[RMDB]
This 177-nucleotide RNA was probed chemically with DMS and 2A3. The DMS profile rests on 1,776 reads. Conditions: 150 mM KOAc, 10 mM MgCl2 and 150 mM bicine (pH 8.5), 24 C. Values cover nucleotides 27 to 126. The 2A3 profile rests on 1,775 reads. 2A3 adducts were read by reverse transcription with SuperScript II with manganese. It was measured as part of the RMDB library RFM100.
RNA sequence: GGGAACGACUCGAGUAGAGUCGAAAAAGCGUAUACGUACGCAAAAGGCUUUCCCACACUCAUUACAGUGAUGUCUUUUGGAACGACCAUGGACUCUCUGAUGGUGGGUGAGGAGGAGGGCCCGAAAUAAGCAAGGGGAUUUCGAUCCCCUUGCUUAAAAAGAAACAACAACAACAAC
Reactivity to DMS in 0.01 (KOAc 150mM, MgCl2 10mM, bicine 150mM(pH8.5), 24C), signal-to-noise 1, nucleotides 027 to 126: a050g000c000g020u000a030u000a030c280g030u000a000c040g020c010a020a110a190a080g000g050c010u000u040u020c000c000c040a230c010a000c020u000c000a000u030u000a000c000a000g000u000g010a020u020g010u000c000u000u040u000u040g010g010a300a140c120g030a160c000c000a020u000g000g000a020c000u000c020u000c000u010g000a090u020g000g000u000g000g000g040u000g000a090g000g000a050g040g000a040g000g090g000c000c010c000g000a010a020a100
Reactivity to 2A3 in 0.01 (KOAc 150mM, MgCl2 10mM, bicine 150mM(pH8.5), 24C), signal-to-noise 2, nucleotides 027 to 126: a000g020c010g020u030a040u010a050c260g070u000a000c000g000c090a000a110a000a000g020g020c000u020u010u000c000c000c000a000c000a000c000u010c000a010u020u020a010c000a010g000u000g050a080u170g040u050c010u110u300u060u040g050g040a300a100c080g130a110c090c010a040u040g000g020a010c000u010c000u000c000u040g220a300u020g110g000u000g030g000g000u010g000a190g090g010a050g000g020a000g000g030g000c000c030c000g020a020a030a050